[RMDB]
RNA sequence: GGGAACGACUCGAGUAGAGUCGAAAAGACGGAAAAGAUCGAACCUAAGAAGAUGAGGAAGUGUGAGCCGAAUCCUAGGGCUCCUAGGGACGCAUCGUCCGAUGCGAAAUAAACACAAACGUCGAAACGACGCGUAUAGGUUCGCCUAUACGCGUCGAAAAGAAACAACAACAACAAC
Reactivity to 2A3 in 0.01 (KOAc 150mM, MgCl2 10mM, bicine 150mM(pH8.5), 24C), signal-to-noise 2, nucleotides 027 to 126: g010a000c010g050g010a130a040a110a000g070a000u210c000g000a050a080c000c130u000a240a000g110a040a050g040a070u080g050a000g020g050a190a060g060u040g020u020g040a040g000c000c100g000a030a220u080c000c000u000a040g150g000g000c030u000c060c000u090a010g010g010g000a000c020g020c000a000u020c050g260u100c000c110g000a000u010g010c000g020a000a000a100u130a080a170a000c100a000c110a000a180a130c000g010u010c000g020a000a060a000
Reactivity to DMS in 0.01 (KOAc 150mM, MgCl2 10mM, bicine 150mM(pH8.5), 24C), signal-to-noise 2, nucleotides 027 to 126: g030a130c040g000g000a090a180a040a050g030a070u000c080g000a100a070c020c020u010a050a160g000a190a030g000a030u010g000a070g070g000a000a120g090u060g000u090g000a150g020c100c050g010a020a080u000c070c050u000a080g000g000g000c050u000c000c040u000a040g000g000g000a290c070g030c050a000u000c000g000u020c120c250g000a020u000g000c040g000a010a040a080u000a190a070a060c020a000c220a060a170a180c080g000u040c000g000a150a080a050